The record gives the reactivity of an RNA of 207 nucleotides to 2A3. The reactions ran in a buffer of 150 mM KOAc, 10 mM MgCl2 and 150 mM bicine (pH 8.5), at 24 C. Reactivities are given for positions 27 through 156. The data come from the RNA Mapping Database (RMDB), library RSTRND. For 2A3 the reverse transcriptase was SuperScript II with manganese.

[RMDB]
RNA sequence: GGGAACGACUCGAGUAGAGUCGAAAAAAGCCUGAGCAGACCAAAGGGAGAUGAUUCCUUGGGAUAUGCUAGUGCCCAAGCACUGCUUGAGCGCGACGCCGCCAAACUGCGGGGAAACCACUCUUUGCACCGAGGCUACCAAGCACGGCGGCCGCCACUAACAGUGACCGUUCGCGGUCACUGUUAGAAAAGAAACAACAACAACAAC
Reactivity to 2A3 in 0.01 (KOAc 150mM, MgCl2 10mM, bicine 150mM(pH8.5), 24C), signal-to-noise 1, nucleotides 027 to 156: a000a000g080c020c000u050g010a000g000c010a000g000a030c000c040a090a130a040g030g060g020a060g000a080u300g010a080u110u040c020c000u010u030g040g000g000a140u060a030u220g000c020u020a010g010u040g050c000c000c000a000a000g000c100a100c300u260g010c000u070u020g070a010g040c100g010c010g010a000c080g000c020c000g000c010c010a080a180a140c080u070g000c070g000g010g030g010a040a000a010c090c010a110c100u020c020u030u250u300g040c090a090c130c070g060a030g070g000c010u040a060c030c010a020a000g030c000a000c100g000g050c020g030g000c000c010g080c000c010a020